[RMDB]
RNA sequence: GGGAACGACUCGAGUAGAGUCGAAAACGCGCUAGGAUUGGAUAAACUUUUUUCUAAAGUAGAUGCUUUUAGCCAUACAGAACAGGCUAAUUCCUACAUGAUGGGAGAUUCUAUUCUUAAUGCGUGGGUACUGCCUAGAGUUCGCUCUAGGCAGUACAAAAGAAACAACAACAACAAC
Reactivity to 2A3 in 0.01 (KOAc 150mM, MgCl2 10mM, bicine 150mM(pH8.5), 24C), signal-to-noise 2, nucleotides 027 to 126: c000g000c010g010c000u000a010g000g010a010u000u080g000g010a040u100a110a190a180c040u120u000u040u000u080u110c060u140a240a130a020g010u030a010g010a060u140g060c050u020u050u000u000a000g000c000c000a060u120a180c100a100g300a240a040c040a060g040g030c000u000a010a030u000u010c000c000u000a010c000a040u060g000a030u040g040g010g010a040g000a030u020u020c000u040a050u030u000c000u000u050a060a060u080g010c000g000u010g000g060
Reactivity to DMS in 0.01 (KOAc 150mM, MgCl2 10mM, bicine 150mM(pH8.5), 24C), signal-to-noise 1, nucleotides 027 to 126: c000g000c010g040c010u000a040g010g010a010u000u010g000g000a020u000a090a130a270c010u010u000u050u000u000u000c000u030a060a090a110g010u010a010g010a130u010g000c200u000u020u000u020a010g010c020c000a130u060a220c200a130g000a090a100c290a190g010g010c010u000a010a000u000u000c040c010u000a040c020a130u010g010a100u000g010g000g000a010g010a070u010u000c020u000a050u010u000c010u000u000a020a070u010g000c000g000u010g000g000